[RMDB]
RNA sequence: GGGAACGACUCGAGUAGAGUCGAAAAAAAAUUAUCAAAGGAGGCACACAAUCAUGGCAGGUGGACCAAGAAGAGGCGGACGUCGUCGUAAAAAAGUAUGCUAUUUCACAGCAAAUGGUAUUACACAGCUCUAGAUUCAGUUCGCUGAAUCUAGAGCAAAAGAAACAACAACAACAAC
Reactivity to 2A3 in 0.01 (KOAc 150mM, MgCl2 10mM, bicine 150mM(pH8.5), 24C), signal-to-noise 2, nucleotides 027 to 126: a000a000a000a000u160u080a060u100c070a100a100a030g060g000a040g000g010c010a030c010a000c090a130a120u090c000a050u070g060g000c070a010g050g000u040g070g020a040c030c030a070a000g030a120a000g000a030g010g020c020g040g060a080c030g000u050c010g000u000c000g010u070a070a070a000a090a000a000g000u000a010u000g000c000u000a020u000u000u030c230a210c140a110g060c100a000a040a000u040g010g000u010a090u030u080a120c200a060c120a040
Reactivity to DMS in 0.01 (KOAc 150mM, MgCl2 10mM, bicine 150mM(pH8.5), 24C), signal-to-noise 2, nucleotides 027 to 126: a040a040a070a090u010u060a060u010c160a080a130a030g050g000a010g010g000c060a050c020a070c190a040a020u000c050a100u030g000g000c110a090g000g020u050g030g000a070c070c040a000a040g000a090a040g010a120g000g020c080g000g010a070c080g000u020c070g020u000c020g030u010a000a050a060a040a080a070g010u000a000u000g000c000u000a020u000u000u000c050a070c210a090g000c140a000a030a050u010g030g000u000a010u070u000a000c020a030c190a140